This 207-nucleotide RNA was probed chemically with DMS and 2A3. The reactions ran in a buffer of 150 mM KOAc, 10 mM MgCl2 and 150 mM bicine (pH 8.5), at 24 C. For DMS, 3,550 sequencing reads were counted. The data come from the RNA Mapping Database (RMDB), library M2RFPK.
RNA sequence: GGGAACGACUCGAGUAGAGUCGAAAACCAUCGACUGUCACCAGAUGCUGCAUCACCUGAUCACUGAUGGCUCAACGGUAUCCGGCGGUACAACUGAACACUUGUAGCUGCCUUUUGAGCGGGUUGGAAAAUCGGAGGUUGUUCGCAACCUCCGAAAUCGUCUAUAUCAGUUCGCUGAUAUAGACGAAAAAGAAACAACAACAACAAC
Reactivity to DMS in 0.01 (KOAc 150mM, MgCl2 10mM, bicine 150mM(pH8.5), 24C), signal-to-noise 1, nucleotides 027 to 156: c010c000a120u000c080g020a160c080u000g000u000c020a120c000c010a050g000a100u000g000c010u000g000c060a140u000c070a080c030c000u020g010a120u000c060a120c100u000g020a090u000g020g020c040u010c030a040a100c020g010g020u000a030u000c030c040g000g050c010g010g020u000a080c060a040a040c020u000g000a070a100c150a060c080u010u000g020u000a090g010c020u000g000c060c050u000u020u000u010g000a070g030c030g030g010g000u000u000g000g010a030a060a080a090u000c010g020g000a040g030g000u000u000g010u010u020c220g000c010a020a020c000c020u010c000c000g000a000a020a040
Reactivity to 2A3 in 0.01 (KOAc 150mM, MgCl2 10mM, bicine 150mM(pH8.5), 24C), signal-to-noise 4, nucleotides 027 to 156: c020c000a030u100c040g090a050c040u090g010u090c020a050c050c010a030g000a070u040g020c030u040g040c010a030u030c010a040c000c010u060g050a070u060c010a000c060u020g020a020u060g080g000c030u030c040a030a070c040g020g010u040a070u050c050c030g010g000c010g020g030u040a030c020a040a040c070u150g110a170a020c050a030c080u040u050g020u050a040g090c030u030g000c000c000u100u100u050u080g040a020g000c060g020g020g040u000u100g060g030a050a080a040a120u020c000g000g000a000g010g010u010u000g010u040u030c090g000c060a000a000c000c000u000c000c000g000a000a000a000